Conditions: 150 mM KOAc, 10 mM MgCl2 and 150 mM bicine (pH 8.5), 24 C. An RNA of 207 nucleotides, treated with 2A3 and DMS and read out base by base.
[RMDB]
RNA sequence: GGGAACGACUCGAGUAGAGUCGAAAAUGUGCUCAAAAGGCAGUGAGACCUUGUGAAAGUAACCUUACUUCUCUGAGCCACUUUCCCCACUAGUAACAUACAGAUAAUAGUGGAGUUUCCAUUUCACAGGGUCAUUAUGGGGAUUAAAUAACUGCAAGUAGUGAUAGGGAUUCGUCCCUAUCACUACAAAAGAAACAACAACAACAAC
Reactivity to 2A3 in 0.01 (KOAc 150mM, MgCl2 10mM, bicine 150mM(pH8.5), 24C), signal-to-noise 5, nucleotides 027 to 156: u100g030u070g000c000u000c020a030a030a050a050g080g000c010a010g020u020g050a120g000a000c010c010u030u000g000u000g010a030a030a030g070u120a080a090c030c050u090u110a080c040u140u100c070u020c030u050g010a010g000c020c010a020c030u030u010u000c020c010c020c000a010c010u050a020g060u140a150a030c020a120u290a100c050a100g100a080u060a160a010u020a100g010u010g000g020a060g010u010u040u000c020c020a060u000u040u000c000a000c010a010g000g020g000u000c010a010u060u080a060u070g030g000g000g020a010u050u210a070a070a180u110a050a020c020u020g000c030a060a080
Reactivity to DMS in 0.01 (KOAc 150mM, MgCl2 10mM, bicine 150mM(pH8.5), 24C), signal-to-noise 4, nucleotides 027 to 156: u000g020u010g010c010u000c010a060a050a090a120g020g000c040a070g000u010g000a160g020a030c020c010u000u050g020u000g000a060a010a080g020u010a050a100c130c040u000u010a070c040u000u010c050u010c060u010g010a040g030c010c010a050c050u000u000u020c020c010c010c020a030c030u000a020g010u000a090a150c090a200u020a300c160a180g020a210u000a060a080u000a010g020u000g010g010a040g010u010u000u000c020c020a180u000u000u000c030a040c000a070g020g030g030u000c010a060u000u010a070u010g010g010g020g010a180u010u010a040a070a130u000a050a090c040u000g010c030a080a290

For DMS, 6,584 sequencing reads were counted. Values cover nucleotides 27 to 156.